Structure probing data (DMS) for a 177-nucleotide construct. The RNA was probed in 150 mM KOAc, 10 mM MgCl2 and 150 mM bicine (pH 8.5) at 24 C. Source: RMDB library OK2TST, as collected in RNAgym.

[RMDB]
RNA sequence: GGGAACGACUCGAGUAGAGUCGAAAACGACAUGGGUGUGACCCAUAUUAUUCGCGGCGACGACCAUGUGACGAAUACCGGCGUACAGAUUUCGAUAUUCAAGGCGCUGGGUGCGACGCCUCCGGUAAUAGGUAGGGCAGUUCGCUGCCCUACCUAUAAAAGAAACAACAACAACAAC
Reactivity to DMS in 0.01 (KOAc 150mM, MgCl2 10mM, bicine 150mM(pH8.5), 24C), signal-to-noise 1, nucleotides 027 to 126: c040g020a050c110a000u000g020g000g020u010g000u000g030a130c000c000c000a090u000a050u020u010a100u010u010c030g030c300g010g000c070g020a100c040g010a090c000c030a040u000g010u000g020a160c020g010a050a050u010a090c000c000g010g000c040g020u000a010c070a120g000a040u000u000u030c300g000a150u020a020u010u000c070a080a090g060g000c000g030c030u000g000g020g030u000g000c050g020a160c040g020c030c070u020c030c030g000g020u030a090